Record summary:
The record gives the reactivity of an RNA of 177 nucleotides to 2A3 and DMS. Conditions: 150 mM KOAc, 10 mM MgCl2 and 150 mM bicine (pH 8.5), 24 C. Source: RMDB library TTRDEL, as collected in RNAgym. For 2A3 the reverse transcriptase was SuperScript II with manganese. For DMS the reverse transcriptase was MarathonRT.
RNA sequence: GGGAACGACUCGAGUAGAGUCGAAAAGAUAUGGAUCGUGGACAUGCUGAACGGUCGGAAACGACCGUACAGCAACAGCCACGGUCCUAAGUCAAAACCUUUUUGAAGCUUCGGCUUCAAAAAGGAAGUGGAUAGGACAGUUCGCUGUCCUAUCCACAAAAGAAACAACAACAACAAC
Reactivity to 2A3 in 0.01 (KOAc 150mM, MgCl2 10mM, bicine 150mM(pH8.5), 24C), signal-to-noise 1, nucleotides 027 to 126: g020a010u030a060u090g000g000a000u000c010g000u000g000g020a040c080a240u090g000c030u020g030a040a020c020g010g030u000c030g030g020a080a070a050c000g000a020c010c020g000u010a000c000a010g030c000a000a010c020a000g080c010c000a010c020g000g000u000c000c000u010a030a010g010u020c000a010a040a120a290c000c000u030u020u010u010u010g020a010a000g000c010u030u180c300g130g000c000u000u030c170a010a040a000a000a010g000g030a020a010
Reactivity to DMS in 0.01 (KOAc 150mM, MgCl2 10mM, bicine 150mM(pH8.5), 24C), signal-to-noise 1, nucleotides 027 to 126: g000a020u010a300u000g000g010a010u000c020g020u010g000g030a000c000a180u000g010c000u000g010a070a000c000g000g010u000c000g030g000a090a120a240c000g010a000c000c000g010u000a010c010a030g000c030a000a050c300a120g000c010c000a020c000g010g020u010c000c010u000a010a030g000u000c030a080a070a080a190c000c000u000u000u000u000u000g000a020a030g000c000u000u010c170g020g010c000u000u000c010a000a010a000a000a010g000g050a000a050